[RMDB]
RNA sequence: GGGAACGACUCGAGUAGAGUCGAAAAACAACAACGUAUUACGCUGGGGGUAAAUCGUACAACCUAGGAGGUGAACAGUUAGCUAAAUUGCCACAACCUAGGAACAAACGUUGUUACAGGUGUAAGCUCAAGCAUUAGUAUUCGUACUAAUGCUUGAAAAAGAAACAACAACAACAAC
Reactivity to 2A3 in 0.01 (KOAc 150mM, MgCl2 10mM, bicine 150mM(pH8.5), 24C), signal-to-noise 6, nucleotides 027 to 126: a000c030a000a000c010a020a010c040g100u150a150u120u070a030c030g010c050u050g040g000g010g100g040u040a010a020a050u150c000g000u030a030c030a030a010c030c000u000a000g000g010a010g010g000u010g000a040a010c000a020g020u030u010a010g000c010u120a240a050a020u030u020g010c010c000a010c010a020a010c010c000u000a000g010g030a010a000c020a000a060a000c010g020u020u040g070u050u020a020c020a010g050g020u030g010u040a030a030g020c020
Reactivity to DMS in 0.01 (KOAc 150mM, MgCl2 10mM, bicine 150mM(pH8.5), 24C), signal-to-noise 9, nucleotides 027 to 126: a100c080a060a050c060a030a040c070g020u010a120u010u000a030c040g020c040u000g000g010g010g010g020u000a020a030a040u000c040g010u000a070c210a080a130c000c000u000a010g000g010a060g010g020u000g000a100a120c020a020g010u000u000a150g020c230u010a030a020a020u000u000g010c090c000a010c020a010a020c000c000u000a010g000g010a070a080c240a070a080a030c020g000u000u010g010u000u000a050c050a100g000g010u000g010u000a040a060g010c170